[RMDB]
The record gives the reactivity of an RNA of 177 nucleotides to DMS. Source: RMDB library 15KREP, as collected in RNAgym. The RNA was probed in 150 mM KOAc, 10 mM MgCl2 and 150 mM bicine (pH 8.5) at 24 C.
RNA sequence: GGGAACGACUCGAGUAGAGUCGAAAAAUGCAGAUUAUGGGUGUGGUUAUGCAGAGUGGUGUGAGAAAAGUUACAUAUGGUACUGCGCAUUGGUUGUUUGCGACCCUUGUCUCAACCUAUGUGAUAAUCUUUGGGUUAGGUUCGCCUAACCCAAAGAAAAAGAAACAACAACAACAAC
Reactivity to DMS in 0.01 (KOAc 150mM, MgCl2 10mM, bicine 150mM(pH8.5), 24C), signal-to-noise 1, nucleotides 027 to 126: a040u000g010c060a050g000a130u020u000a090u000g000g020g040u000g030u010g000g010u010u010a040u000g020c030a060g000a040g010u000g010g010u000g020u000g000a120g020a060a040a100a100g050u000u000a040c000a020u010a060u010g010g020u000a070c140u010g010c300g020c020a050u000u010g000g040u010u000g000u000u000u030g000c050g000a070c020c030c060u000u000g040u030c000u000c000a100a040c040c010u000a000u000g010u000g010a050u030a040a160